Notes: The data come from the RNA Mapping Database (RMDB), library RNAMAK. This 207-nucleotide RNA was probed chemically with 2A3 and DMS.
RNA sequence: GGGAACGACUCGAGUAGAGUCGAAAAGAUAUGGAGUCUUUGUCAGGUCACCAUGAGAGGCUCUCGGAAACGAGAGCUACCCACCUCAUGCGACCUUGGAUUUAAGACUCCUAAGUCAAAACCUCUUUCCAUCAUCUUCGGAUGAUGGAAAGAGGAACCUGAAUGUGAGAUUCGUCUCACAUUCAGGAAAAGAAACAACAACAACAAC
Reactivity to 2A3 in 0.01 (KOAc 150mM, MgCl2 10mM, bicine 150mM(pH8.5), 24C), signal-to-noise 4, nucleotides 027 to 156: g010a020u070a040u130g000g000a000g000u000c010u010u010u010g020u000c030a010g000g010u000c020a070c150c010a080u000g010a000g000a000g010g000c000u000c000u000c000g010g020a100a050a030c010g000a000g010a010g000c000u010a010c020c040c010a060c000c000u000c000a000u000g010c030g010a010c020c000u030u120g050g010a020u210u270u230a010a000g000a000c000u000c000c000u000a040a010g020u000c020a020a050a060a210c000c000u000c000u000u010u000c000c000a000u000c000a000u000c000u050u100c250g140g000a000u000g000a000u000g000g000a000a000a000g000a000g000g000a000a000
Reactivity to DMS in 0.01 (KOAc 150mM, MgCl2 10mM, bicine 150mM(pH8.5), 24C), signal-to-noise 1, nucleotides 027 to 156: g000a090u000a180u000g010g010a070g000u000c010u000u010u020g020u000c010a030g000g020u000c010a060c090c060a020u000g000a010g000a230g040g010c000u000c000u010c000g030g000a140a130a280c020g030a050g030a030g000c030u000a000c040c030c030a300c130c010u000c000a020u010g030c040g000a040c020c010u000u010g020g000a070u000u000u000a010a050g020a030c030u000c000c000u000a000a020g020u000c080a080a060a090a190c000c000u010c000u010u000u000c010c000a010u000c000a020u020c010u010u000c300g050g000a000u000g020a050u000g030g000a000a040a020g000a010g000g020a000a000